[RMDB]
RNA sequence: GGGAACGACUCGAGUAGAGUCGAAAAGAUUUAGACACUUGGAUUAGAAGAACCUUGGGUGGAGAGUAUUUAUUACCAUAUGGUAUUGAGGUCGAUGUUAGUGUUUAUGAUUGCGAUGCAGCUCUUAGAGUGAUGACUGCGAUUUGUCGGAAUGUGAACUAUCGCAGUGAUUCGUCACUGCGAUAGUAAAAGAAACAACAACAACAAC
Reactivity to 2A3 in 0.01 (KOAc 150mM, MgCl2 10mM, bicine 150mM(pH8.5), 24C), signal-to-noise 4, nucleotides 027 to 156: g030a010u080u140u250a040g010a020c020a000c050u040u070g040g050a050u080u120a120g080a160a020g010a030a080c020c010u050u130g030g000g000u030g040g010a030g000a010g050u040a080u060u160u040a090u040u110a030c000c020a050u040a090u270g030g000u030a040u040u110g020a030g010g020u050c030g000a020u060g020u070u040a070g020u010g020u060u060u040a070u080g060a070u020u110g010c010g020a030u110g010c030a000g000c010u000c020u040u100a090g030a020g070u060g050a080u020g020a040c010u020g030c020g050a050u030u040u090g020u030c030g010g060a070a050u080g050u040g030a010
Reactivity to DMS in 0.01 (KOAc 150mM, MgCl2 10mM, bicine 150mM(pH8.5), 24C), signal-to-noise 2, nucleotides 027 to 156: g000a120u000u010u000a100g020a110c030a060c040u020u000g020g080a070u000u010a110g010a100a110g020a050a070c070c020u010u010g010g010g040u000g010g000a130g000a120g000u000a030u000u010u010a080u020u000a090c030c020a120u000a100u000g040g030u000a060u000u000g010a060g030g010u000c040g000a090u010g000u000u010a070g050u010g010u000u010u010a080u000g030a110u020u010g020c060g030a100u000g020c050a070g000c040u010c030u000u000a080g020a180g030u000g020a070u020g000a080c060u000g010c020g020a130u000u010u010g010u000c030g010g010a080a120u000g030u000g000a080